[RMDB]
RNA sequence: GGGAACGACUCGAGUAGAGUCGAAAAUGCUACCUAAACACAACUUCAAGACACAUCCCUAAGCUAUGCCCCCCUCUUACACGGCAACUUCCUAGGAAAUCUAGCAUGUCCACUGAUUCUGCAUCUAGUCACGUUUGCUCAAUGCUAGGUGAGAAGAGAGUGUAAAAAGAUUCGUCUUUUUACACUCAAAAGAAACAACAACAACAAC
Reactivity to 2A3 in 0.01 (KOAc 150mM, MgCl2 10mM, bicine 150mM(pH8.5), 24C), signal-to-noise 2, nucleotides 027 to 156: u060g000c000u010a060c000c020u080a050a140a010c050a020c030a140a130c060u150u130c080a100a010g070a080c040a000c020a170u070c010c000c020u070a060a040g020c070u130a190u300g010c010c010c000c000c090c000u000c020u000u030a040c030a000c040g020g000c000a000a060c020u020u000c000c010u030a030g030g070a040a150a110u050c010u030a010g020c020a050u040g020u040c000c030a040c060u030g010a080u060u000c010u070g060c010a020u020c010u010a040g040u100c020a010c120g040u030u070u080g080c070u060c030a040a040u040g000c000u010a020g040g000u030g000a010g020a070a020g030a000
Reactivity to DMS in 0.01 (KOAc 150mM, MgCl2 10mM, bicine 150mM(pH8.5), 24C), signal-to-noise 3, nucleotides 027 to 156: u000g000c030u000a100c050c020u010a070a100a120c060a080c050a060a090c040u010u000c040a130a120g010a130c050a080c080a110u000c010c000c010u000a070a080g030c030u010a080u000g010c000c020c020c010c020c020u000c050u000u000a070c050a090c040g010g020c010a050a070c050u000u000c020c020u000a080g020g000a030a070a090u000c030u000a050g030c040a070u000g010u000c010c030a070c050u000g010a090u000u010c040u000g010c040a060u000c040u000a050g000u000c030a060c080g000u000u000u000g000c070u010c070a050a040u000g010c000u000a020g000g030u000g010a100g010a080a140g000a240
An RNA of 207 nucleotides, treated with 2A3 and DMS and read out base by base. For 2A3 the reverse transcriptase was SuperScript II with manganese. Conditions: 150 mM KOAc, 10 mM MgCl2 and 150 mM bicine (pH 8.5), 24 C. Source: RMDB library OK3TST, as collected in RNAgym. Values cover nucleotides 27 to 156. DMS adducts were read by reverse transcription with MarathonRT. For DMS, 9,270 sequencing reads were counted.